[RMDB]
RNA sequence: GGGAACGACUCGAGUAGAGUCGAAAAACAGCAGUGUGGCAGAGAAACUCUGACAGUUGAUUUUUAGUUUACAGCAGAAAUGUGCCUUCUCUUUCUGUCUCAAUCAUGACUUGGCCUCAGCAUGUGCCUUCCAAAACCCGCUUCUGAAAGAAAAGGAAGCUGAGUAUUAUUUCGAUAAUACUCAGCUAAAAGAAACAACAACAACAAC
Reactivity to DMS in 0.01 (KOAc 150mM, MgCl2 10mM, bicine 150mM(pH8.5), 24C), signal-to-noise 2, nucleotides 027 to 156: a080c040a050g000c040a100g020u000g010u020g020g000c040a090g010a150g030a130a080a090c060u000c040u020g000a080c030a080g030u000u000g000a060u020u020u000u010u020a080g020u010u000u000a110c070a130g000c040a110g030a100a050a080u010g000u000g020c030c010u000u010c030u040c030u000u000u010c030u020g000u000c040u000c060a090a110u010c050a030u000g040a070c050u000u010g000g000c010c010u020c050a090g020c040a090u000g030u000g010c030c000u000u000c020c030a060a040a050a170c030c020c040g010c030u000u000c030u000g000a060a050a130g000a030a090a080a150g000g010a100
Reactivity to 2A3 in 0.01 (KOAc 150mM, MgCl2 10mM, bicine 150mM(pH8.5), 24C), signal-to-noise 3, nucleotides 027 to 156: a010c030a010g070c030a010g010u020g000u040g060g030c040a010g020a000g040a120a100a060c030u050c020u100g040a030c030a060g040u060u030g060a090u030u080u050u090u130a040g020u070u100u080a070c050a020g030c010a030g040a060a080a080u080g030u100g040c020c000u070u010c020u000c000u030u060u000c010u030g090u080c020u030c080a080a110u030c040a080u110g050a130c020u030u040g040g000c010c020u040c050a070g000c010a040u050g030u060g040c010c010u040u040c030c040a020a090a050a050c030c000c040g050c000u060u040c020u070g110a130a110a080g090a010a100a110a010g100g040a040

Conditions: 150 mM KOAc, 10 mM MgCl2 and 150 mM bicine (pH 8.5), 24 C.
Structure probing data (DMS and 2A3) for a 207-nucleotide construct.
DMS (dimethyl sulfate) methylates the pairing face of unpaired adenines and cytosines.